[RMDB]
RNA sequence: GGGAACGACUCGAGUAGAGUCGAAAAGAUAUGGAGCCUCAGGACAUGCUUGGGCAUCGGAAACGAUGUAGGGAGCAACAGCCUGGGCUCCUAAGUCAAAAGAAUGUCCAACUUCGGUUGGACAUUCCGAACUGAUGUUCUUCGGAACAUCAGUUCGAAAAGAAACAACAACAACAAC
Reactivity to DMS in 0.01 (KOAc 150mM, MgCl2 10mM, bicine 150mM(pH8.5), 24C), signal-to-noise 2, nucleotides 027 to 126: g000a010u000a210u010g000g010a000g010c020c000u010c040a040g020g020a050c100a300u010g010c000u000u000g020g000g010c000a000u000c010g000g000a040a050a100c000g030a000u000g000u000a060g000g000g020a010g010c010a080a110c240a150g000c000c000u000g000g000g000c000u000c000c000u000a000a100g010u000c020a130a070a130a170g010a020a000u000g000u000c000c000a010a000c000u000u020c230g020g020u010u000g000g000a000c000a000u000u000c000
Reactivity to 2A3 in 0.01 (KOAc 150mM, MgCl2 10mM, bicine 150mM(pH8.5), 24C), signal-to-noise 1, nucleotides 027 to 126: g020a010u010a020u050g000g000a010g050c040c050u270c070a000g020g000a040c220a300u300g000c000u040u000g100g140g000c010a000u030c000g000g060a000a020a020c020g010a000u000g040u100a070g060g300g060a010g020c130a240a110c000a170g010c020c010u000g010g000g040c000u020c050c000u000a000a010g010u000c000a060a040a000a190g030a000a010u000g000u000c000c000a000a010c010u070u100c300g130g010u000u000g000g060a000c000a000u010u000c000